Source information:
This 177-nucleotide RNA was probed chemically with DMS and 2A3. As a SHAPE reagent, 2A3 marks flexible, mostly unpaired nucleotides at the ribose 2'-OH. For DMS, 1,561 sequencing reads were counted. It was measured as part of the RMDB library RFMREP. DMS adducts were read by reverse transcription with MarathonRT.
RNA sequence: GGGAACGACUCGAGUAGAGUCGAAAAGCUACAGUGAUAUAUAUAAUGUGUUACACCACCUGAGAGGGCGGUGCAAUCAUAAAUGUAUAUCAAUACAGGGAUUGCUUGUUGGAAUGUCAAGCAUGAAUCUAUACUUCUCCUUCGGGAGAAGUAUAGAAAAAGAAACAACAACAACAAC
Reactivity to DMS in 0.01 (KOAc 150mM, MgCl2 10mM, bicine 150mM(pH8.5), 24C), signal-to-noise 2, nucleotides 027 to 126: g000c050u000a030c110a090g000u000g010a020u000a010u000a000u000a010u010a130a040u010g020u030g000u000u000a020c010a010c000c000a010c010c000u000g010a210g000a190g010g010g020c080g010g020u000g010c000a030a010u000c000a010u000a070a100a030u000g010u000a000u010a000u000c010a010a070u010a090c150a060g010g030g010a100u000u000g000c030u000u010g000u000u010g010g000a120a090u000g010u010c010a000a020g010c040a040u010g010a110a070
Reactivity to 2A3 in 0.01 (KOAc 150mM, MgCl2 10mM, bicine 150mM(pH8.5), 24C), signal-to-noise 1, nucleotides 027 to 126: g020c000u060a090c080a100g080u010g020a040u000a000u000a000u000a000u030a160a070u090g050u000g000u020u020a010c000a000c000c000a030c010c000u030g040a040g050a050g040g000g000c000g000g000u000g000c000a020a050u040c010a000u020a040a180a080u010g000u010a020u000a000u000c040a030a000u150a080c060a020g130g050g010a070u010u070g020c020u030u030g030u120u050g150g100a300a110u150g080u170c020a000a000g010c000a030u030g040a000a020